[RMDB]
RNA sequence: GGGAACGACUCGAGUAGAGUCGAAAAGAGCCGACAGAGAAGUCGGGAAGCGACGAGAGAGAAUAGAAAACAUUGGAAUUCGAGAUACUGUCACAAAAUGACAGACGUCGCCAUAUUCUCCGAGAAGCCCGAGCAUAUACUUCGGUAUAUGCUCGGGAAAAGAAACAACAACAACAAC
Reactivity to 2A3 in 0.01 (KOAc 150mM, MgCl2 10mM, bicine 150mM(pH8.5), 24C), signal-to-noise 2, nucleotides 027 to 126: g130a020g050c000c000g000a000c000a010g250a000g070a300a030g010u010c000g000g000g010a030a000g000c040g020a010c010g010a030g020a000g000a000g080a160a000u090a050g140a020a030a020a030c050a220u170u240g080g050a000a100u070u040c050g010a010g020a100u070a110c010u010g000u000c000a010c130a140a000a070a100u090g000a000c000a030g100a080c000g010u000c000g000c000c000a000u020a110u180u070c030u000c010c000g010a020g010a070a000g000
Reactivity to DMS in 0.01 (KOAc 150mM, MgCl2 10mM, bicine 150mM(pH8.5), 24C), signal-to-noise 1, nucleotides 027 to 126: g000a210g000c020c000g000a000c000a110g000a230g010a160a140g000u000c000g000g030g000a100a270g010c000g030a000c040g080a300g140a190g020a300g000a020a050u030a050g040a130a150a030a180c080a060u010u010g020g000a130a110u000u000c060g000a140g000a140u000a140c000u000g000u000c000a010c160a110a090a040a290u020g000a000c000a080g000a240c000g000u000c000g000c020c090a030u000a000u000u010c000u000c000c110g000a220g000a160a030g000